[RMDB]
The record gives the reactivity of an RNA of 207 nucleotides to DMS and 2A3. For 2A3 the reverse transcriptase was SuperScript II with manganese. Reactivities are rounded to 0.1 and cut off at 0 and 3. The 2A3 profile rests on 2,239 reads. For DMS, 5,394 sequencing reads were counted.
RNA sequence: GGGAACGACUCGAGUAGAGUCGAAAAACAUGCUGGCCAACCCAACCCCACGAUCCUCCAUCGGCAUGAUCAUAAUGUGUUCUCAAAUAUCAGGCCAGUAAAUCACCAUGCUCGUGCUGGUAAAGGCAACUUAUGCCCAAGUUCGCUUGGGCAUAAACUAUAAAUGGAGCUUCGGCUCCAUUUAUAGAAAAGAAACAACAACAACAAC
Reactivity to DMS in 0.01 (KOAc 150mM, MgCl2 10mM, bicine 150mM(pH8.5), 24C), signal-to-noise 3, nucleotides 027 to 156: a140c070a070u000g020c000u010g000g040c020c010a150a140c090c000c010a130a150c040c020c030c010a090c150g010a160u010c020c020u000c020c040a050u000c060g030g000c030a020u010g010a060u000c060a090u000a100a090u010g030u000g000u000u000c040u000c050a070a090a140u010a160u010c050a090g020g030c010c020a060g010u000a020a070a100u000c020a030c040c040a090u000g010c030u000c020g010u000g000c000u020g030g040u000a030a040a080g000g040c080a060a060c090u000u000a030u000g010c000c010c010a010a060g020u000u010c280g010c030u000u000g000g000g020c000a000u000a000a020a130
Reactivity to 2A3 in 0.01 (KOAc 150mM, MgCl2 10mM, bicine 150mM(pH8.5), 24C), signal-to-noise 3, nucleotides 027 to 156: a000c030a000u050g000c000u000g030g000c000c010a030a040c060c000c060a030a050c020c010c020c020a060c060g060a090u030c010c010u030c030c010a020u060c010g020g000c000a010u010g000a000u020c010a030u050a170a070u090g050u020g020u090u070c050u010c040a080a130a030u260a120u110c060a040g010g010c010c010a030g010u040a020a040a060u070c020a010c060c020a000u060g010c000u010c030g010u010g020c000u010g020g000u040a150a080a000g030g000c010a020a030c050u020u010a000u020g010c000c000c000a010a000g010u050u060c110g040c120u000u010g040g000g000c000a000u000a000a000a000